[RMDB]
RNA sequence: GGGAACGACUCGAGUAGAGUCGAAAACAGCAAUUAUUCGUAAUUGCUGAAUGGCGGACGCAGCGCGGAAGGAGCGCGCAGGACUCCUUCGCCGCCUUUUAAUAAGCAGGUACUUCGGUACCUGCAAUUAGAGUAACGUCUUCGGACGUUACUCUAAAAAAGAAACAACAACAACAAC
Reactivity to DMS in 0.01 (KOAc 150mM, MgCl2 10mM, bicine 150mM(pH8.5), 24C), signal-to-noise 1, nucleotides 027 to 126: c000a020g010c000a000a000u000u000a040u000u000c160g000u000a000a020u020u000g000c000u060g040a030a080u010g020g050c000g000g010a300c080g050c180a110g030c100g000c040g020g010a060a030g010g000a060g020c080g010c150g000c090a050g000g000a160c020u030c010c010u000u000c050g030c000c000g060c000c000u000u000u000u000a000a120u020a140a110g010c000a000g000g000u000a020c000u000u010c140g030g020u000a010c000c000u000g000c010a010a010
Overview
An RNA of 177 nucleotides, treated with DMS and read out base by base. The reactions ran in a buffer of 150 mM KOAc, 10 mM MgCl2 and 150 mM bicine (pH 8.5), at 24 C. It was measured as part of the RMDB library M2PK50.